[RMDB]
Conditions: 150 mM KOAc, 10 mM MgCl2 and 150 mM bicine (pH 8.5), 24 C. An RNA of 177 nucleotides, treated with DMS and 2A3 and read out base by base. It was measured as part of the RMDB library M2PK50. For DMS the reverse transcriptase was MarathonRT. The DMS profile rests on 2,619 reads.
RNA sequence: GGGAACGACUCGAGUAGAGUCGAAAAACUGCGGUAUUCGUACCGCAGUACAAAAAAAGGAUAAAAUACCAGUAGCCCGAAACGCAAGCGAGCACUACUGGCGCAAGAACCACUUCGGUGGUUCUAACUGUAGUCUAAUCUUCGGAUUAGACUACAGAAAAGAAACAACAACAACAAC
Reactivity to DMS in 0.01 (KOAc 150mM, MgCl2 10mM, bicine 150mM(pH8.5), 24C), signal-to-noise 3, nucleotides 027 to 126: a050c000u000g010c010g000g000u010a010u000u010c160g030u000a000c000c000g010c010a010g010u000a020c050a010a010a050a110a070a060a090g030g000a180u020a080a060a070a090u000a110c020c010a010g010u000a010g010c120c070c020g000a040a070a070c110g000c260a110a100g010c030g000a090g010c180a140c020u000a000c010u000g010g020c080g020c170a130a020g020a020a000c000c000a010c000u000u000c180g030g000u000g010g000u000u000c000u010a010a090
Reactivity to 2A3 in 0.01 (KOAc 150mM, MgCl2 10mM, bicine 150mM(pH8.5), 24C), signal-to-noise 4, nucleotides 027 to 126: a000c000u000g000c000g000g010u040a040u040u080c150g010u040a010c000c000g050c000a000g000u000a020c030a010a090a030a000a000a000a050g130g020a090u220a200a140a050a010u160a100c000c010a000g000u010a010g040c000c010c070g070a130a150a040c090g000c080a030a080g110c050g160a040g020c050a010c040u030a010c000u020g000g020c020g060c030a040a020g000a000a000c010c000a010c010u060u100c210g090g000u000g000g000u000u000c000u000a010a010